Chemical mapping of a 177-nucleotide RNA with 2A3 and DMS. 2A3 adducts were read by reverse transcription with SuperScript II with manganese. DMS adducts were read by reverse transcription with MarathonRT. The RNA was probed in 150 mM KOAc, 10 mM MgCl2 and 150 mM bicine (pH 8.5) at 24 C.

RNA sequence: GGGAACGACUCGAGUAGAGUCGAAAAUGAUCAAAACUGUCUGACACAAUUUGAGCUUGCUAUAGCAAGAAAGUCUAACCUAUUCCGGUGUUCUCUCUCCCAUGAGACAAGCCGUUAUAUAGACUUAACAAAAGCCACUAUUCGUAGUGGCUUUUGUAAAAGAAACAACAACAACAAC
Reactivity to 2A3 in 0.01 (KOAc 150mM, MgCl2 10mM, bicine 150mM(pH8.5), 24C), signal-to-noise 2, nucleotides 027 to 126: u100g000a090u080c090a000a060a020a150c070u020g050u090c100u090g100a020c010a000c010a200a180u150u110u210g030a070g040c000u000u000g000c030u140a050u070a300g000c000a030a040g040a090a020a010g020u070c000u000a060a170c010c050u000a020u110u000c000c000g020g020u070g080u230u000c000u000c000u020c000u010c000c030c010a030u140g010a000g000a020c020a120a000g020c000c000g000u050u000a010u000a000u000a000g000a000c000u060u100a070
Reactivity to DMS in 0.01 (KOAc 150mM, MgCl2 10mM, bicine 150mM(pH8.5), 24C), signal-to-noise 3, nucleotides 027 to 126: u020g010a080u020c070a050a050a050a110c100u020g010u030c040u000g010a100c140a060c080a070a100u020u000u010g010a070g010c030u010u010g000c020u010a080u020a110g000c010a020a020g000a120a040a020g000u000c020u000a040a100c150c210u000a060u000u000c050c000g010g010u000g010u030u000c130u000c000u000c090u000c050c020c040a090u020g000a030g000a020c110a090a180g000c000c000g000u020u010a030u000a060u010a030g000a020c000u000u010a110